[RMDB]
RNA sequence: GGGAACGACUCGAGUAGAGUCGAAAACAAACACGGAUCUGUGUCCAGCGAUCCUGAGCAUGGAACUGUUUCUCUUCACGGAGGGGCUGCUUCUGUGUCUCGGUUGAUUGCUGGACAGUUCGACGACUACGGAUAUCUUAUUCGUAAGAUAUCCGUAAAAAGAAACAACAACAACAAC
Reactivity to 2A3 in 0.01 (KOAc 150mM, MgCl2 10mM, bicine 150mM(pH8.5), 24C), signal-to-noise 9, nucleotides 027 to 126: c040a000a100a010c070a020c070g050g010a050u040c030u120g150u040g050u090c000c000a000g000c000g000a000u000c000c000u000g000a000g000c000a010u010g010g000a000a000c000u000g010u010u030u000c010u000c000u140u170c140a060c130g020g000a000g000g000g010g000c000u010g010c030u000u000c000u000g040u000g170u080c010u000c010g000g000u070u210g000a000u000u000g000c000u010g000g010a000c000a000g000u000u000c010g040a060c060g020a030c060
Reactivity to DMS in 0.01 (KOAc 150mM, MgCl2 10mM, bicine 150mM(pH8.5), 24C), signal-to-noise 8, nucleotides 027 to 126: c060a110a090a120c220a140c080g000g000a030u000c070u020g010u010g010u000c000c000a000g010c010g000a010u000c000c010u000g000a010g000c010a000u000g000g000a000a030c010u000g010u000u000u000c000u000c000u000u010c290a170c300g000g000a010g000g000g000g000c000u000g000c180u000u000c000u000g020u000g000u020c000u000c000g010g010u020u030g000a020u000u000g010c000u000g000g000a000c000a010g000u000u000c020g000a120c140g010a160c140